[RMDB]
RNA sequence: GGGAACGACUCGAGUAGAGUCGAAAAGAUAUGGAGGAGCGCGAUAAGCUCCUCCUCGGAAACGAGGAUGAGCUUUUGACGCGUGACUCCUAAGUCAAAGUUGUAUCUGCUUCGGCAGAUACAACAACAAAAUGGAAUGCUUCGGCAUUCCAUUUUGAAAAGAAACAACAACAACAAC
Reactivity to DMS in 0.01 (KOAc 150mM, MgCl2 10mM, bicine 150mM(pH8.5), 24C), signal-to-noise 5, nucleotides 027 to 126: g010a040u000a300u010g010g020a020g010g010a300g010c000g040c000g000a150u010a050a040g010c010u000c000c050u000c000c000u000c010g000g000a100a100a150c010g010a010g010g010a010u000g000a010g010c000u000u000u010u010g010a180c050g010c000g010u000g010a280c010u000c000c000u000a010a060g010u000c040a060a110a120g010u000u000g010u000a000u000c000u000g010c000u000u010c190g020g000c000a010g000a000u000a000c000a000a010c000a060a220
Reactivity to 2A3 in 0.01 (KOAc 150mM, MgCl2 10mM, bicine 150mM(pH8.5), 24C), signal-to-noise 3, nucleotides 027 to 126: g020a030u070a040u100g000g000a000g000g000a050g020c010g000c020g070a110u070a260a030g000c010u000c000c000u010c000c000u000c000g000g000a060a020a010c000g010a000g010g010a010u010g000a000g010c000u100u160u180u260g190a090c010g000c000g010u010g000a010c000u000c000c000u020a110a020g040u020c060a210a070a050g000u000u000g000u010a000u000c000u000g030c000u040u090c270g120g000c000a000g000a000u000a000c000a000a000c000a010a020
An RNA of 177 nucleotides, treated with DMS and 2A3 and read out base by base.
Conditions: 150 mM KOAc, 10 mM MgCl2 and 150 mM bicine (pH 8.5), 24 C.
2A3 adducts were read by reverse transcription with SuperScript II with manganese.